This 207-nucleotide RNA was probed chemically with 2A3. The reactions ran in a buffer of 150 mM KOAc, 10 mM MgCl2 and 150 mM bicine (pH 8.5), at 24 C.
[RMDB]
RNA sequence: GGGAACGACUCGAGUAGAGUCGAAAACGUCCGAUGCGGAAGUUCGUGCUUCCGUCGAACGCGAAAGUCGGACGGCGGUCAUGAGUCGCAACGCAAAGCCGCGGCAAGUGGAGUUAGCGAGAAGAGAAAAAGUCACGAGUGUUCGCACUCGUGACAACCACCAGGUUAACUUCGGUUAACCUGGUGGAAAAGAAACAACAACAACAAC
Reactivity to 2A3 in 0.01 (KOAc 150mM, MgCl2 10mM, bicine 150mM(pH8.5), 24C), signal-to-noise 1, nucleotides 027 to 156: c000g030u020c000c000g010a020u070g000c000g000g010a100a000g040u190u300c120g150u300g070c000u010u010c010c000g000u000c000g010a160a050c030g000c040g080a090a090a000g010u010c000g010g000a010c010g030g010c050g060g050u090c030a030u120g000a030g030u000c020g050c100a100a050c020g020c090a130a060a170g020c030c000g000c070g030g120c030a050a000g000u030g000g040a140g000u120u120a000g030c140g070a020g050a140a000g080a010g030a030a000a000a080a080g000u000c000a000c000g000a000g010u030g040u100u030c120g040c030a000c000u000c000g000u020g000a000c000a000a010

For 2A3 the reverse transcriptase was SuperScript II with manganese. Values are in units of 0.01, from 0 to 300, in steps of 10. The 2A3 profile rests on 464 reads.